[RMDB]
RNA sequence: GGGAACGACUCGAGUAGAGUCGAAAAUAUAACUAGUGUGAAAUGGCAGAAAAUUGGUCAUGGAGCCACUUAUGGCCACUUAAUCUAAGGAUCUUCAUGGAAUUUCACAAUUGCUGUCUACAAAAAGCACCUAUCUCACGUUCGCGUGAGAUAGGUGAAAAGAAACAACAACAACAAC
Reactivity to DMS in 0.01 (KOAc 150mM, MgCl2 10mM, bicine 150mM(pH8.5), 24C), signal-to-noise 1, nucleotides 027 to 126: u010a090u010a110a170c040u030a060g050u000g010u000g010a030a100a040u000g010g000c050a040g000a020a060a100a080u000u000g000g000u000c020a040u000g000g000a150g060c060c120a110c160u010u000a030u020g000g000c040c100a070c090u020u000a030a050u000c120u000a050a030g000g010a060u000c010u000u000c010a040u000g000g000a040a110u000u010u000c120a090c010a060a080u020u000g000c000u000g010u010c020u000a070c170a060a030a170a050a100g000
Reactivity to 2A3 in 0.01 (KOAc 150mM, MgCl2 10mM, bicine 150mM(pH8.5), 24C), signal-to-noise 1, nucleotides 027 to 126: u110a000u060a000a090c130u090a070g140u060g010u000g180a090a130a200u100g000g010c060a000g050a070a300a000a080u050u030g040g000u020c010a040u030g000g010a010g060c030c000a030c030u120u060a100u300g040g000c050c040a080c070u050u140a090a090u070c000u000a080a000g010g000a010u020c010u010u000c030a020u030g090g050a120a160u060u210u170c090a060c000a080a050u060u010g010c020u020g020u080c040u050a080c060a020a190a000a000a000g060

This 177-nucleotide RNA was probed chemically with DMS and 2A3.
Conditions: 150 mM KOAc, 10 mM MgCl2 and 150 mM bicine (pH 8.5), 24 C.
2A3 adducts were read by reverse transcription with SuperScript II with manganese.
The DMS profile rests on 764 reads.